Chemical mapping of a 177-nucleotide RNA with 2A3 and DMS. Reactivities are rounded to 0.1 and cut off at 0 and 3. DMS adducts were read by reverse transcription with MarathonRT. For 2A3, 1,570 sequencing reads were counted. The RNA was probed in 150 mM KOAc, 10 mM MgCl2 and 150 mM bicine (pH 8.5) at 24 C. It was measured as part of the RMDB library M2PK90.
[RMDB]
RNA sequence: GGGAACGACUCGAGUAGAGUCGAAAAAGAAAGGAGGCCCGGUUACCUAUAUAGAGAUAAUGAUACCGGCGCGCGCGCGCUGGGUGGCCUCCGCAUUGAAUAGAGUAGGUACACGCGCGCGAAAAAAGUAGAGAGUAUGAUUCGUCAUACUCUCUACAAAAGAAACAACAACAACAAC
Reactivity to 2A3 in 0.01 (KOAc 150mM, MgCl2 10mM, bicine 150mM(pH8.5), 24C), signal-to-noise 1, nucleotides 027 to 126: a000g040a010a050a010g000g000a000g020g000c000c000c080g000g020u030u030a010c010c000u020a050u030a020u090a200g080a040g030a200u100a220a120u170g070a020u040a090c020c000g040g000c030g010c000g000c000g000c000g000c000g000c070u080g050g030g000u040g000g010c000c000u030c010c010g020c000a120u140u190g030a040a030u080a210g080a010g080u040a000g020g020u050a000c020a010c030g000c010g010c010g000c040g030a090a060a000a000a000a000
Reactivity to DMS in 0.01 (KOAc 150mM, MgCl2 10mM, bicine 150mM(pH8.5), 24C), signal-to-noise 2, nucleotides 027 to 126: a130g000a090a120a190g000g010a060g010g010c010c030c190g030g010u000u000a040c010c000u000a060u000a190u030a130g020a120g000a050u010a040a070u000g000a160u000a120c020c010g000g020c060g000c010g040c020g010c010g000c000g020c030u000g010g010g030u010g030g000c000c030u010c030c010g040c170a030u000u000g000a060a190u010a110g000a070g000u010a020g030g000u020a060c060a050c000g000c000g020c020g010c000g010a010a040a070a060a070a030